[RMDB]
RNA sequence: GGGAACGACUCGAGUAGAGUCGAAAAAAGUUCGGAGGGAAAUCCCAAGAAGGUCAUUCGAGAUUCAAGAGGUGAGGAGGGAUCCCCGAGACGCUGGAGGAGCACCGGGAAAAAGAAAAGAAGGCAAGUAUAAGUUAUGGUUCGCCAUAACUUAUACAAAAGAAACAACAACAACAAC
Reactivity to DMS in 0.01 (KOAc 150mM, MgCl2 10mM, bicine 150mM(pH8.5), 24C), signal-to-noise 2, nucleotides 027 to 126: a110a070g000u000u000c020g000g020a130g000g000g000a070a070a060u000c000c000c020a140a170g000a050a060g010g010u000c060a080u000u000c090g010a100g000a070u010u020c140a080a080g000a090g000g030u000g000a040g000g000a110g020g000g030a050u000c050c010c010c030g000a210g000a040c120g000c070u010g030g000a100g010g000a070g030c040a070c050c050g040g010g000a040a040a130a120a090g000a060a020a020a050g000a060a080g000g000c100a050a070
Reactivity to 2A3 in 0.01 (KOAc 150mM, MgCl2 10mM, bicine 150mM(pH8.5), 24C), signal-to-noise 1, nucleotides 027 to 126: a000a000g100u060u040c020g020g020a020g060g050g020a030a080a030u030c010c000c010a000a030g030a000a000g050g020u020c010a040u070u070c050g000a040g010a130u070u070c020a020a060g010a020g070g050u080g010a010g010g020a020g010g020g000a050u080c000c000c020c000g000a010g000a000c060g000c030u030g040g060a050g020g040a030g030c010a030c020c030g030g020g000a000a100a000a030a020g050a040a100a010a010g020a010a040g020g010c070a100a020